[RMDB]
RNA sequence: GGGAACGACUCGAGUAGAGUCGAAAAGAUAUGGAACCGUGCCAUGAAGGCUGAUGACCCAUAUCACAGCCAGUCGGAAACGACUGGUCACAGUAUGGCAAGGCCGGCAUGGCACGGUUCCUAAGUCGUAGGGGUUAUUGUUCGCAAUAACCCCUACAAAAGAAACAACAACAACAAC
Reactivity to DMS in 0.01 (KOAc 150mM, MgCl2 10mM, bicine 150mM(pH8.5), 24C), signal-to-noise 1, nucleotides 027 to 126: g030a060u000a300u010g030g000a020a050c000c000g000u000g000c000c020a000u000g000a000a060g000g030c010u000g050a110u000g000a090c300c000c000a030u000a020u000c090a170c300a300g000c010c000a010g000u000c000g050g000a280a060a260c030g060a000c000u030g030g000u020c000a070c280a200g000u000a050u000g000g010c030a100a210g010g010c000c030g000g000c080a030u000g000g050c000a000c000g000g000u000u000c000c000u030a000a040g000u000c210